[RMDB]
RNA sequence: GGGAACGACUCGAGUAGAGUCGAAAAGGUGAGCGGUGUGCGGGCUGCCGUCUCUAUCAGACGCGUUAUGGCACGCCGGCUGCCCAAGCCCACCCUCCAGGGGAGGCUGGAGGCGGAUUUUAAAAUACCCAGCCUAAUAGUUCGCUAUUAGGCUGGGAAAAGAAACAACAACAACAAC
Reactivity to DMS in 0.01 (KOAc 150mM, MgCl2 10mM, bicine 150mM(pH8.5), 24C), signal-to-noise 2, nucleotides 027 to 126: g070g010u000g000a060g040c000g000g000u000g050u000g020c080g020g000g000c030u000g100c200c040g000u010c010u000c300u020a200u040c300a020g000a010c030g000c080g020u030u020a080u020g000g000c030a000c000g010c000c000g000g030c040u000g010c000c020c020a140a070g000c000c060c000a210c160c050c040u040c030c050a050g000g000g040g060a160g010g010c020u000g020g030a060g010g040c190g030g000a180u000u010u040u150a010a200a110a090u030a200
Reactivity to 2A3 in 0.01 (KOAc 150mM, MgCl2 10mM, bicine 150mM(pH8.5), 24C), signal-to-noise 3, nucleotides 027 to 126: g060g010u100g040a040g000c000g030g020u020g000u020g010c080g000g100g000c030u020g040c030c040g050u000c020u000c030u040a210u120c110a030g010a000c000g050c040g060u140u100a160u250g280g000c000a000c000g000c000c000g000g040c000u000g000c000c000c000a040a060g010c000c000c000a030c020c000c000u000c000c000a020g000g000g030g050a010g140g060c010u000g000g000a000g010g000c080g110g010a180u020u060u050u160a050a080a000a000u080a080

The record gives the reactivity of an RNA of 177 nucleotides to DMS and 2A3. Conditions: 150 mM KOAc, 10 mM MgCl2 and 150 mM bicine (pH 8.5), 24 C. 2A3 is a SHAPE reagent: it acylates the 2'-hydroxyl of flexible nucleotides of all four kinds.